[RMDB]
RNA sequence: GGGAACGACUCGAGUAGAGUCGAAAAUUCAUCCUCAAGUUUCUUGAUCUUCUUGUUGAUUCGCCGGAGCUCCUUCUCGGCUAUUCGCUUUUUCUUCCUUUCCUCUACCCACUGCUCGAGGGCCUCCACGUUAACUAAUCUUCGGAUUAGUUAACGUAAAAGAAACAACAACAACAAC
Reactivity to 2A3 in 0.01 (KOAc 150mM, MgCl2 10mM, bicine 150mM(pH8.5), 24C), signal-to-noise 2, nucleotides 027 to 126: u020u020c020a030u020c010c010u030c070a100a070g050u040u110u000c000u050u090g100a110u030c020u150u010c010u020u150g070u040u090g070a060u100u070c030g010c020c030g040g040a040g010c050u070c010c000u070u060c050u020c040g030g000c010u030a030u030u060c020g020c010u020u020u020u040u070c000u010u060c010c010u030u060u010c010c000u010c010u020a080c030c000c010a040c050u040g010c020u000c030g030a000g010g050g010c000c000u000c000c000
Reactivity to DMS in 0.01 (KOAc 150mM, MgCl2 10mM, bicine 150mM(pH8.5), 24C), signal-to-noise 2, nucleotides 027 to 126: u000u010c120a070u000c010c020u000c120a080a180g010u000u000u000c010u010u000g000a090u020c030u000u010c030u010u000g000u000u000g000a100u000u010c080g020c020c030g010g000a140g010c080u000c060c030u000u000c040u000c050g010g030c040u000a050u000u000c060g010c040u000u000u010u010u000c040u000u000c030c030u000u000u000c020c010u010c030u010a130c010c010c020a130c060u000g000c020u000c030g010a050g010g010g010c070c040u000c020c050